[RMDB]
RNA sequence: GGGAACGACUCGAGUAGAGUCGAAAACACUAUGAGGCAUGGUAGCUCGAUCAGUGUCUGGUUCGGUAGAGCGUUCGAGUACCCGUCUCUACUGGCUCGCUUACACACAAGGCUACGGAGGCAUUCCGACGCCUGGCCCUUUCGAGGGCCAGGCGUCAAAAGAAACAACAACAACAAC
Reactivity to 2A3 in 0.01 (KOAc 150mM, MgCl2 10mM, bicine 150mM(pH8.5), 24C), signal-to-noise 1, nucleotides 027 to 126: c060a040c000u080a050u210g040a120g000g050c030a040u110g070g000u080a050g020c000u000c000g030a040u020c030a110g060u050g210u110c020u080g010g000u250u270c180g090g000u110a000g000a000g000c000g010u090u020c000g000a000g000u030a030c000c000c040g110u090c030u070c010u030a030c000u020g020g000c050u000c040g120c100u180u220a010c100a010c010a040c040a140a000g000g040c040u040a120c040g010g000a060g030g040c010a070u130u020c050c000
This 177-nucleotide RNA was probed chemically with 2A3. The reactions ran in a buffer of 150 mM KOAc, 10 mM MgCl2 and 150 mM bicine (pH 8.5), at 24 C. Source: RMDB library OK1LIB, as collected in RNAgym. For 2A3, 502 sequencing reads were counted. For 2A3 the reverse transcriptase was SuperScript II with manganese.